[RMDB]
RNA sequence: GGGAACGACUCGAGUAGAGUCGAAAAUCGCGCGCGAGCGCUGAUCGGCCUUCCCGCGCGAACCUCGUUCGCCGUUCGCCGUUCGCGGCGCGUCGCGCGCCGCCCGUCGUUGCCGGUGCGCGAAGCACAGUGAUGAUGAGUUCGCUCAUCAUCACUGAAAAGAAACAACAACAACAAC
Reactivity to DMS in 0.01 (KOAc 150mM, MgCl2 10mM, bicine 150mM(pH8.5), 24C), signal-to-noise 5, nucleotides 027 to 126: u010c150g020c000g020c010g030c060g010a130g010c030g020c020u000g000a020u000c030g010g000c030c090u000u000c090c120c070g030c180g020c000g000a020a030c030c140u010c300g000u000u000c030g010c010c020g010u000u000c190g010c090c000g010u000u010c060g040c300g090g040c070g060c060g030u010c010g000c040g030c020g020c010c190g030c120c020c010g010u010c060g000u000u000g000c060c010g020g010u000g020c000g000c060g030a100a100g010c080a140
Reactivity to 2A3 in 0.01 (KOAc 150mM, MgCl2 10mM, bicine 150mM(pH8.5), 24C), signal-to-noise 3, nucleotides 027 to 126: u100c010g000c000g000c000g010c010g000a000g020c040g000c000u020g020a080u050c020g020g010c010c000u050u050c060c040c010g050c060g000c030g030a050a080c000c140u160c150g060u080u050c030g010c070c000g000u030u070c020g000c030c010g010u010u050c140g000c160g240g000c010g010c030g260u070c000g010c000g000c000g020c000c000g010c000c000c000g100u100c040g130u110u110g070c040c010g050g030u030g030c030g010c020g090a060a010g030c060a030
Conditions: 150 mM KOAc, 10 mM MgCl2 and 150 mM bicine (pH 8.5), 24 C. An RNA of 177 nucleotides, treated with DMS and 2A3 and read out base by base. For DMS, 5,427 sequencing reads were counted. For DMS the reverse transcriptase was MarathonRT. It was measured as part of the RMDB library OK2TRN.